[RMDB]
RNA sequence: GGGAACGACUCGAGUAGAGUCGAAAAGACGAUACCGGCCGAAGGACGGCCCGUACGGUCAGUCUGAUCGCCGAUAUCGACGCUCACGGCCGCAAUCGUAUUGGUGCUGAGGCCGAGGCUCAGCCGACUGCCUGGUUUUAUUCGUAAAACCAGGCAGAAAAGAAACAACAACAACAAC
Reactivity to DMS in 0.01 (KOAc 150mM, MgCl2 10mM, bicine 150mM(pH8.5), 24C), signal-to-noise 3, nucleotides 027 to 126: g000a120c010g010a040u000a010c060c020g030g020c010c040g010a130a300g010g000a010c010g050g000c000c000c130g020u020a110c230g000g020u000c010a050g010u030c000u000g010a130u000c260g000c000c030g010a020u000a030u010c000g010a080c060g000c020u010c060a220c030g000g010c020c010g000c040a090a020u000c040g000u000a270u010u010g000g020u000g010c040u010g000a110g010g010c010c020g020a090g020g000c020u000c090a080g010c010c030g030a170
Reactivity to 2A3 in 0.01 (KOAc 150mM, MgCl2 10mM, bicine 150mM(pH8.5), 24C), signal-to-noise 2, nucleotides 027 to 126: g040a010c010g010a000u020a000c000c000g000g050c070c090g000a030a010g030g000a010c010g000g000c000c000c000g050u130a060c120g010g000u030c030a060g030u000c000u030g090a300u080c010g040c000c000g000a010u010a020u030c010g020a020c030g020c000u070c000a100c030g020g000c030c030g020c090a030a060u060c050g070u130a160u110u270g050g010u130g060c030u020g020a060g030g000c000c000g020a040g000g030c010u030c070a020g050c040c010g030a060
An RNA of 177 nucleotides, treated with DMS and 2A3 and read out base by base. Source: RMDB library OK2TST, as collected in RNAgym. The 2A3 profile rests on 1,921 reads. Conditions: 150 mM KOAc, 10 mM MgCl2 and 150 mM bicine (pH 8.5), 24 C. For DMS, 2,170 sequencing reads were counted. For 2A3 the reverse transcriptase was SuperScript II with manganese.